[RMDB]
RNA sequence: GGGAACGACUCGAGUAGAGUCGAAAAGGGAGCCGCUCGCCGCGCUUCUAAGUAAUCAUGCGCAAUAAUUUGUGGAGGGGUAAUAGGCUGGCCGAGCGCUGACGCUGCUUACUUUGCAGAACUCGCUCCCCUCGGGGUAUUUCGAUACCCCGAGGGGAAAAGAAACAACAACAACAAC
Reactivity to 2A3 in 0.01 (KOAc 150mM, MgCl2 10mM, bicine 150mM(pH8.5), 24C), signal-to-noise 1, nucleotides 027 to 126: g000g000g000a000g000c010c010g020c070u030c000g090c060c000g000c000g000c000u010u000c000u000a160a010g040u050a150a150u250c150a040u100g010c000g070c050a040a070u130a300a090u160u300u120g000u060g000g140a250g000g070g000g000u020a050a240u020a020g140g000c000u000g000g000c260c000g000a060g060c000g000c040u000g050a050c040g000c020u000g000c000u040u010a210c000u100u020u060g000c000a000g000a070a300c000u040c000g000c000u000

The record gives the reactivity of an RNA of 177 nucleotides to 2A3. Reactivities are given for positions 27 through 126. The RNA was probed in 150 mM KOAc, 10 mM MgCl2 and 150 mM bicine (pH 8.5) at 24 C.